[RMDB]
RNA sequence: GGGAACGACUCGAGUAGAGUCGAAAAGACGGUGGCUGCAAGUCGCAUCGCAAAACCGCGGCAAGUGGAGUUAGCGAGAGGAGGCUGGGAUUUGGCUUCCUUAAGCAAUCGGUCACCGAGAAGGUGUUAAACGGCGCAUGCUUCGGCAUGCGCCGAAGAUAUGAUUGGUGUUCGCACCAAUCAUAUCAAAAGAAACAACAACAACAAC
Reactivity to 2A3 in 0.01 (KOAc 150mM, MgCl2 10mM, bicine 150mM(pH8.5), 24C), signal-to-noise 2, nucleotides 027 to 156: g110a000c020g000g000u010g020g000c020u020g010c100a090a030g030u120c050g040c030a050u040c020g000c100a030a030a090a110c070c040g010c040g040g050c240a190a100g020u090g050g050a140g040u090u120a010g000c000g000a020g010a000g050g000a020g000g000c010u060g030g140g130a230u100u130u300g040g010c010u000u000c000c000u000u000a080a000g000c010a000a020u040c000g010g000u010c000a000c010c020g010a000g000a000a010g020g010u050g000u080u170a070a100a020c010g000g030c010g000c010a000u000g020c020u070u090c120g040g000c000a000u010g000c000g000c000c010g000a000a000
Reactivity to DMS in 0.01 (KOAc 150mM, MgCl2 10mM, bicine 150mM(pH8.5), 24C), signal-to-noise 1, nucleotides 027 to 156: g000a230c000g000g020u010g000g010c000u000g030c010a150a300g000u000c060g090c000a200u010c040g000c060a110a070a120a250c050c070g000c050g030g020c010a050a110g030u040g060g000a180g000u000u000a180g010c000g040a300g000a020g050g030a040g030g000c020u000g030g010g010a200u000u010u000g040g000c020u000u030c020c040u010u000a000a300g040c010a040a040u010c030g010g030u010c000a070c030c010g000a120g010a120a260g000g000u000g010u010u000a020a100a260c030g000g000c010g010c010a040u000g020c000u000u010c280g100g120c000a030u010g000c000g000c010c030g030a020a000
An RNA of 207 nucleotides, treated with 2A3 and DMS and read out base by base. Reactivities are given for positions 27 through 156. For 2A3, 1,422 sequencing reads were counted. The DMS profile rests on 1,395 reads.